Source information:
Structure probing data (2A3) for a 177-nucleotide construct.

RNA sequence: GGGAACGACUCGAGUAGAGUCGAAAAGUGCUGUGUCUUUCAUUGGGCAGUUGACCUCUUUGCUGUCUUGUUGCAAUAAGAGGACAACAGCAUAUUAUACGGUGCGGAGCAAGUGGGAAGGGCACUGCGACUCCAGGGCGUUCGCGCCCUGGAGUCGAAAAGAAACAACAACAACAAC
Reactivity to 2A3 in 0.01 (KOAc 150mM, MgCl2 10mM, bicine 150mM(pH8.5), 24C), signal-to-noise 1, nucleotides 027 to 126: g080u000g000c000u000g000u000g000u030c000u050u200u130c020a110u000u080g050g080g070c090a090g000u060u040g010a130c000c000u000c140u000u050u000g000c000u000g070u300c000u000u260g210u250u250g090c010a030a030u000a010a000g050a050g090g000a000c000a080a000c000a000g000c000a000u000a000u090u300a070u050a000c000g090g000u050g000c000g000g000a080g000c080a050a050g020u240g100g080g000a000a240g050g070g000c050a070c000u000g000

Reactivities are given for positions 27 through 126.
The data come from the RNA Mapping Database (RMDB), library OK1LIB.
2A3 adducts were read by reverse transcription with SuperScript II with manganese.